Structure probing data (2A3 and DMS) for a 177-nucleotide construct. For 2A3 the reverse transcriptase was SuperScript II with manganese. In probing experiments dimethyl sulfate is read out at A N1 and C N3, which are open when not base-paired. For 2A3, 2,630 sequencing reads were counted. For DMS, 2,242 sequencing reads were counted. The reactions ran in a buffer of 150 mM KOAc, 10 mM MgCl2 and 150 mM bicine (pH 8.5), at 24 C.
RNA sequence: GGGAACGACUCGAGUAGAGUCGAAAAAACGAUGCGCGGCUGGAGGCAAUGCGCCUUCUGGAGCGUGUCGGCAUUGACCGCGCCAAGAGCCGCCUUCGGUCCUACCCGCACGAGUUCUCAGGCGGCAGCCCUCGGCUAUAUUCGUAUAGCCGAGGGCAAAAGAAACAACAACAACAAC
Reactivity to 2A3 in 0.01 (KOAc 150mM, MgCl2 10mM, bicine 150mM(pH8.5), 24C), signal-to-noise 4, nucleotides 027 to 126: a000a000c010g010a000u020g030c040g000c010g250g040c020u020g070g000a000g000g000c050a050a170u300g090c100g010c040c010u080u050c050u040g080g010a040g030c020g020u100g020u010c000g010g020c010a030u020u300g050a070c020c020g020c020g000c050c000a170a060g100a030g050c000c040g000c000c000u020u020c010g010g000u000c010c010u020a040c010c010c020g030c010a110c070g070a080g040u120u030c050u010c050a040g040g010c000g000g040c020a010
Reactivity to DMS in 0.01 (KOAc 150mM, MgCl2 10mM, bicine 150mM(pH8.5), 24C), signal-to-noise 2, nucleotides 027 to 126: a070a000c000g010a000u010g010c070g060c000g030g000c000u020g000g000a050g000g010c000a220a160u070g000c300g050c000c000u020u000c040u010g010g000a120g000c000g000u020g010u020c000g000g010c210a120u070u010g000a000c000c000g000c070g000c040c070a100a100g010a070g000c000c080g000c000c010u000u040c000g000g000u000c010c020u000a100c130c010c010g000c020a080c010g000a050g020u010u000c080u000c040a080g000g000c000g000g020c270a120